[RMDB]
RNA sequence: GGGAACGACUCGAGUAGAGUCGAAAAUUGCGCCUCCGAUUCGCCGUCGGCAUUUCCCCAGCAGCCAAGACCUACCAGGCUGCGGUGCGGCUCGCCGCACAGGUCAUCCCUCAUCGGGCGCGUCCUGGAUAGGGCUAUACUUUCGAGUAUAGCCCAAUGAUAAUGUGUGUUUCGACACACAUUAUCAAAAAGAAACAACAACAACAAC
Reactivity to 2A3 in 0.01 (KOAc 150mM, MgCl2 10mM, bicine 150mM(pH8.5), 24C), signal-to-noise 2, nucleotides 027 to 156: u090u060g010c040g010c010c010u050c040c010g050a060u130u120c020g020c090c070g070u020c020g030g040c090a060u060u080u000c000c010c030c050a060g010c010a000g020c020c010a160a030g050a070c010c020u090a150c090c050a000g000g020c010u000g000c000g000g000u020g010c040g000g000c060u080c170g120c000c000g040c000a020c000a030g060g060u030c050a090u060c010c010c010u160c020a120u030c050g070g020g000c040g020c020g030u080c000c010u030g040g000a060u080a110g000g000g000c010u000a000u000a010c000u050u070u180c260g060a000g000u000a000u000a030g000c030c000c000a010a000
Reactivity to DMS in 0.01 (KOAc 150mM, MgCl2 10mM, bicine 150mM(pH8.5), 24C), signal-to-noise 2, nucleotides 027 to 156: u000u010g020c010g020c010c010u000c040c030g010a140u000u000c040g030c050c100g030u000c020g060g020c080a190u010u000u000c000c000c010c000a140g020c050a020g020c020c000a110a100g000a140c070c060u000a120c070c040a210g000g020c000u000g060c020g000g000u000g000c030g000g000c110u000c200g000c000c010g000c050a050c000a050g000g010u010c040a150u000c030c010c020u000c070a110u000c080g000g020g010c000g010c040g000u000c010c030u030g010g000a180u010a110g020g040g040c000u000a000u000a010c010u000u000u000c260g020a080g010u000a020u000a030g020c010c000c020a000a040